[RMDB]
RNA sequence: GGGAACGACUCGAGUAGAGUCGAAAAGAUAUGGAAUAAUCAUGUUUGAGCCUCACAUCGGAAACGAUGUCGAGGCAAUGAUGACAUGAGUUAUUCCUAAGUCAAAACGCUUGGUUCGCCAAGCGAAGGAAUUGUAUACCUUCGGGUAUACAAUUCCAAAAGAAACAACAACAACAAC
Reactivity to 2A3 in 0.01 (KOAc 150mM, MgCl2 10mM, bicine 150mM(pH8.5), 24C), signal-to-noise 2, nucleotides 027 to 126: g010a020u050a020u040g000g020a020a020u010a020a000u000c000a000u000g040u030u050u110g050a020g010c000c000u000c000a000c030a000u010c000g020g010a010a010a010c020g010a000u010g020u160c230g030a010g010g000c000a000a000u020g010a010u070g010a020c000a000u030g000a080g110u010u000a000u000u000c000c010u000a050a000g020u020c000a000a020a120a160c020g020c000u010u020g000g040u080u090c280g070c100c000a010a010g000c020g040a030a030
Reactivity to DMS in 0.01 (KOAc 150mM, MgCl2 10mM, bicine 150mM(pH8.5), 24C), signal-to-noise 2, nucleotides 027 to 126: g020a040u000a240u000g020g000a000a000u000a000a000u000c000a010u000g020u000u010u000g020a300g020c020c000u020c000a020c010a000u000c000g010g000a050a070a080c000g000a010u000g000u010c200g030a020g060g060c010a000a000u010g010a110u000g000a020c000a000u000g020a100g000u000u000a000u000u000c000c000u000a020a090g010u000c020a080a080a160a240c030g000c030u000u000g000g000u000u010c270g050c000c020a020a000g010c000g030a020a090
The record gives the reactivity of an RNA of 177 nucleotides to 2A3 and DMS.
Conditions: 150 mM KOAc, 10 mM MgCl2 and 150 mM bicine (pH 8.5), 24 C.
As a SHAPE reagent, 2A3 marks flexible, mostly unpaired nucleotides at the ribose 2'-OH.